[RMDB]
RNA sequence: GGGAACGACUCGAGUAGAGUCGAAAAAGUCUGCUGAUAAGAAGCCUGAGGAGUUGUCUGUAACUCUUGUGGAGGCAUACACAGAUGUGUUUGAUGACACACAGGUUGAGAUGAUUGAUGAGGUUACGAACUAAACGCAUGCUCGUUUUCGUCCAUGCACCUAAGAUCCGUUCGCGGAUCUUAGGUGAAAAGAAACAACAACAACAAC
Reactivity to DMS in 0.01 (KOAc 150mM, MgCl2 10mM, bicine 150mM(pH8.5), 24C), signal-to-noise 1, nucleotides 027 to 156: a170g040u000c010u000g050c030u000g040a120u000a100a090g020a180a110g020c020c000u000g000a170g020g000a050g010u000u080g030u000c020u030g020u000a010a100c000u010c000u020u010g010u010g000g020a130g010g000c020a080u000a080c010a040c030a160g010a170u010g000u000g000u000u000u000g010a110u010g000a160c020a060c020a050c050a030g000g070u000u000g000a140g010a120u000g020a110u010u000g000a040u000g010a070g020g020u000u000a000c050g000a100a100c130u090a060a040a070c130g020c030a130u010g000c040u010c030g020u000u000u000u000c000g010u020c010c000a100u010g030
Reactivity to 2A3 in 0.01 (KOAc 150mM, MgCl2 10mM, bicine 150mM(pH8.5), 24C), signal-to-noise 2, nucleotides 027 to 156: a000g100u020c030u050g010c040u020g040a050u040a200a030g060a060a000g020c010c020u060g010a070g010g000a010g000u040u060g060u130c120u070g140u100a010a030c000u060c000u100u080g020u000g010g070a030g010g010c020a000u040a050c030a000c010a020g190a240u220g050u020g040u020u090u160g090a110u100g010a000c010a000c000a000c030a070g040g000u050u030g010a060g010a130u140g010a070u110u050g000a030u050g010a020g000g050u060u090a000c120g060a090a010c070u180a160a010a000c080g000c020a040u040g010c000u020c030g000u030u000u040u090c010g020u020c010c040a000u110g000
Record summary: Structure probing data (DMS and 2A3) for a 207-nucleotide construct. High DMS reactivity at an A or C suggests that its Watson-Crick edge is free. 2A3 adducts were read by reverse transcription with SuperScript II with manganese. DMS adducts were read by reverse transcription with MarathonRT.